Description: Conditions: 150 mM KOAc, 10 mM MgCl2 and 150 mM bicine (pH 8.5), 24 C. The record gives the reactivity of an RNA of 170 nucleotides to DMS and 2A3. Reactivities are rounded to 0.1 and cut off at 0 and 3. 2A3 adducts were read by reverse transcription with SuperScript II with manganese.
RNA sequence: GGGAACGACUCGAGUAGAGUCGAAAAGGACUACCCUCUCCACCCUCCCAACACACUCCUUCCCCCCUGCGGGGCUUCCCCAUAAGAUGGCAGGAACCCACUCAUUGGGGUCCGCUGUUCCAUUCUUGACAGACUGCCUUCGGGCAGUCUAAAAGAAACAACAACAACAAC
Reactivity to DMS in 0.01 (KOAc 150mM, MgCl2 10mM, bicine 150mM(pH8.5), 24C), signal-to-noise 3, nucleotides 027 to 129: g030g060a090c090u060a170c100c050c050u020c000u010c000c040a080c100c040c010u010c000c030c040a070a110c100a080c190a210c100u000c000c050u020u000c000c000c020c000c030c090u060g020c070g020g030g020g060c130u000u000c030c000c010c120a060u000a040a120g000a090u010g010g000c000a050g050g010a030a040c050c000c000a050c180u080c200a160u030u030g060g040g000g050u010c010c070g030c070u030g010u080u000c040c000a100u030u070c000u010u070g010a060c160
Reactivity to 2A3 in 0.01 (KOAc 150mM, MgCl2 10mM, bicine 150mM(pH8.5), 24C), signal-to-noise 2, nucleotides 027 to 129: g050g040a010c040u080a080c020c020c020u000c000u050c010c030a110c000c000c000u000c000c000c000a060a000c090a030c000a010c010u000c030c000u000u000c040c010c000c010c000c060u010g030c070g020g000g000g020c000u050u000c000c000c000c000a040u060a040a040g020a000u020g010g000c070a030g050g010a020a020c030c000c000a050c040u140c090a140u080u180g000g000g000g000u020c000c030g000c010u040g010u010u010c010c000a010u010u020c040u030u040g020a010c000